[RMDB]
RNA sequence: GGGAACGACUCGAGUAGAGUCGAAAAAUAUGUGCACAGGUAGUCCUUCUAUAGUUGAAUUUAAUAGGUUGGCUACCUGUGACUGGACUGAAAGUGGUGAUUACACCCUUGCCAAUACUACAACAGACACCAUAAUAGGGUUCGCCCUAUUAUGGUGAAAAGAAACAACAACAACAAC
Reactivity to DMS in 0.01 (KOAc 150mM, MgCl2 10mM, bicine 150mM(pH8.5), 24C), signal-to-noise 3, nucleotides 027 to 126: a100u000a060u020g010u010g000c010a010c010a010g000g000u000a000g010u010c000c030u000u000c010u000a020u000a100g010u010u010g000a110a140u010u020u010a110a050u000a010g000g010u010u000g000g000c000u000a010c000c020u010g010u000g000a010c030u000g000g010a110c170u010g010a110a040a040g010u010g030g030u010g010a210u010u000a210c010a040c000c020c010u000u000g000c040c030a060a110u000a070c100u000a050c060a030a050c150a080g010a300
Reactivity to 2A3 in 0.01 (KOAc 150mM, MgCl2 10mM, bicine 150mM(pH8.5), 24C), signal-to-noise 3, nucleotides 027 to 126: a000u170a030u170g120u110g050c000a000c000a000g000g000u010a000g010u070c000c030u020u030c010u010a060u020a040g090u060u120g120a150a170u140u110u120a110a040u030a020g080g010u030u010g000g020c000u000a000c010c000u000g000u000g000a010c000u000g000g020a030c030u010g070a030a060a060g090u170g050g000u020g020a080u050u150a120c010a040c000c000c000u010u050g020c010c000a040a010u040a060c090u010a050c010a150a000c000a040g100a010

This 177-nucleotide RNA was probed chemically with DMS and 2A3. It was measured as part of the RMDB library 15KREP. The RNA was probed in 150 mM KOAc, 10 mM MgCl2 and 150 mM bicine (pH 8.5) at 24 C.